[RMDB]
RNA sequence: GGGAACGACUCGAGUAGAGUCGAAAAAUGGUCCUCUCCAUCUCCAAGCCUGCUAUGACACAACGCAUUGUUCUCAUGCUUCAAAUCUCUGACUUCUCUCCCGGGACCAGAAGAAGAAUACUCUCUUCUUUUAAGGGGCUCAUGUGAUUGGGUCAGAGUAAAUGACGGAGUUCGCUCCGUCAUUUACAAAAGAAACAACAACAACAAC
Reactivity to DMS in 0.01 (KOAc 150mM, MgCl2 10mM, bicine 150mM(pH8.5), 24C), signal-to-noise 1, nucleotides 027 to 156: a150u000g020g030u010c010c030u000c010u000c010c010a080u000c010u010c030c020a060a140g010c010c000u000g010c050u000a060u020g010a180c050a110c040a070a080c080g010c060a140u000u000g040u000u000c010u010c060a110u020g030c010u000u010c040a060a110a120u000c040u000c020u010g000a070c020u000u010c030u000c050u000c030c040c040g080g040g040a050c000c010a150g000a030a020g000a030a030g020a090a140u000a140c170u000c110u010c010u000u000c020u000u010u000u000a050a110g000g010g000g000c030u000c000a070u000g030u000g020a080u000u000g000g000g000u000c000a010g000a060
Reactivity to 2A3 in 0.01 (KOAc 150mM, MgCl2 10mM, bicine 150mM(pH8.5), 24C), signal-to-noise 2, nucleotides 027 to 156: a010u080g010g030u020c020c040u000c030u000c020c010a080u020c020u010c070c030a070a080g020c020c000u040g040c040u090a060u200g040a010c010a010c040a160a140c130g010c040a000u020u120g020u130u040c010u000c060a020u060g010c060u130u150c070a150a170a210u010c010u020c000u000g000a030c010u220u050c010u230c000u010c010c030c010g040g000g000a010c020c030a010g000a000a000g000a000a000g000a050a020u140a230c060u090c000u000c010u030u020c000u070u030u010u010a090a120g060g000g010g030c020u030c010a040u180g040u050g060a040u010u050g010g000g000u010c010a000g010a010
Structure probing data (DMS and 2A3) for a 207-nucleotide construct. Values are in units of 0.01, from 0 to 300, in steps of 10. The reactions ran in a buffer of 150 mM KOAc, 10 mM MgCl2 and 150 mM bicine (pH 8.5), at 24 C. For DMS, 2,596 sequencing reads were counted. As a SHAPE reagent, 2A3 marks flexible, mostly unpaired nucleotides at the ribose 2'-OH.